RNA sequence: GGGAACGACUCGAGUAGAGUCGAAAAUGACCUUCGGGUCACGUUUUGCGUACUACUCAACUUUUGACGUGCGUGUGCUACCCACCGAAUCCCAAAUAGGAUUCGAGGCACACAUGCACGAUAAGUUGAGUAUCGCUCGGUGUACAUUCGUGUACAACUGAUAUUUAUAUUUCGAUAUAAAUAUCAGAAAAGAAACAACAACAACAAC
Reactivity to 2A3 in 0.01 (KOAc 150mM, MgCl2 10mM, bicine 150mM(pH8.5), 24C), signal-to-noise 9, nucleotides 027 to 156: u090g000a010c010c000u020u040c300g120g000g000u040c030a030c080g040u050u050u180u190g010c010g030u060a110c040u010a000c000u010c000a010a010c000u050u060u100u300g210a120c030g000u000g000c010g000u000g000u000g010c030u110a100c020c040c040a080c050c020g000a000a000u020c030c020c050a230a290a120u300a120g000g000a000u000u000c000g000a030g000g020c020a000c000a000c000a010u100g000c000a000c000g030a030u010a020a000g000u000u000g000a000g000u000a000u020c000g010c010u040c060g110g050u070g000u020a020c010a040u030u150c210g120u070g000u040a010c010a040a070
Reactivity to DMS in 0.01 (KOAc 150mM, MgCl2 10mM, bicine 150mM(pH8.5), 24C), signal-to-noise 4, nucleotides 027 to 156: u000g010a030c000c010u000u010c300g060g010g020u000c010a020c040g000u000u000u000u000g010c020g010u020a110c110u000a020c000u000c010a000a030c010u000u000u000u010g030a260c100g030u000g010c000g040u000g020u010g000c050u000a020c000c000c010a190c150c000g000a010a010u000c010c000c020a050a210a240u010a040g020g000a030u000u000c010g000a050g010g000c070a070c020a000c000a000u000g000c000a010c010g000a060u000a000a010g010u000u000g000a020g000u000a000u000c060g030c030u010c050g020g010u000g010u000a020c010a100u010u000c220g030u010g020u000a000c000a080a300